[RMDB]
RNA sequence: GGGAACGACUCGAGUAGAGUCGAAAAUGAAUCGAGAUAGUGGUAGAAAUAGCAAGGGGUUCUAUCGUAAACGGCCGGAUAGAACCCUGUGCACGUGGUCCGCCCACGGCUGUCGGGUUUAGGCCAACGAUUUGCACAGUUUCGACUGUGUAAGUCGAAAAGAAACAACAACAACAAC
Reactivity to DMS in 0.01 (KOAc 150mM, MgCl2 10mM, bicine 150mM(pH8.5), 24C), signal-to-noise 1, nucleotides 027 to 126: u010g000a040a040u000c050g010a090g010a020u000a040g010u000g000g010u000a150g000a300a300a300u070a250g000c100a300a300g000g000g000g000u000u000c000u000a000u000c000g000u010a040a040a050c170g000g020c000c000g000g000a000u000a010g010a000a000c000c010c000u000g000u030g020c020a060c010g000u000g010g000u010c130c150g010c030c000c000a030c010g000g000c020u000g020u020c020g000g000g000u000u000u010a040g020g000c000c010a040a150
Reactivity to 2A3 in 0.01 (KOAc 150mM, MgCl2 10mM, bicine 150mM(pH8.5), 24C), signal-to-noise 3, nucleotides 027 to 126: u120g010a000a020u040c030g000a010g000a200u020a020g030u020g040g070u070a060g120a150a240a120u260a100g000c070a220a240g000g000g000g000u000u000c000u000a000u000c000g050u080a080a070a080c080g020g000c010c000g040g000a000u000a010g000a000a000c010c000c000u000g010u010g000c030a020c040g010u010g000g000u020c050c190g000c010c000c000a000c000g000g000c010u010g030u020c000g000g000g000u010u030u080a040g010g000c000c000a000a010